[RMDB]
RNA sequence: GGGAACGACUCGAGUAGAGUCGAAAACGCCAGCUGAAUCGAAGCUAGUAUCGUGUGCGAGUUCGUACAUGAUGCUUUUGCUUGGCGCAACUCAAUGUUGCGAUAGCUGGCACAUUGAGUUAUGUACGAUCAACAGUUAUUUCGAUAAUUGUUGAUCAAAAGAAACAACAACAACAAC
Reactivity to 2A3 in 0.01 (KOAc 150mM, MgCl2 10mM, bicine 150mM(pH8.5), 24C), signal-to-noise 5, nucleotides 027 to 126: c040g000c000c000a000g000c010u050g100a100a120u130c120g050a040a000g010c000u000a000g010u000a000u000c010g010u010g000u010g000c010g030a180g300u250u300c020g000u010a000c000a000u000g000a000u000g000c000u080u040u060u020g000c000u000u020g030g000c010g000c000a000a000c000u060c120a080a170u300g000u010u010g010c000g020a030u110a020g000c000u000g000g080c000a000c000a010u070u140g080a070g060u110u120a100u150g060u070a040c090
Reactivity to DMS in 0.01 (KOAc 150mM, MgCl2 10mM, bicine 150mM(pH8.5), 24C), signal-to-noise 9, nucleotides 027 to 126: c180g010c000c000a010g000c010u000g010a110a110u030c060g010a010a010g010c010u000a020g010u000a000u000c000g030u000g010u000g000c000g000a300g020u040u040c020g050u000a000c000a000u000g000a000u000g000c000u000u020u010u010g000c000u000u000g000g020c010g000c010a010a000c010u010c260a120a100u040g010u000u000g000c000g010a130u020a010g020c000u000g000g000c000a030c120a030u020u000g000a150g010u010u010a060u030g000u010a100c170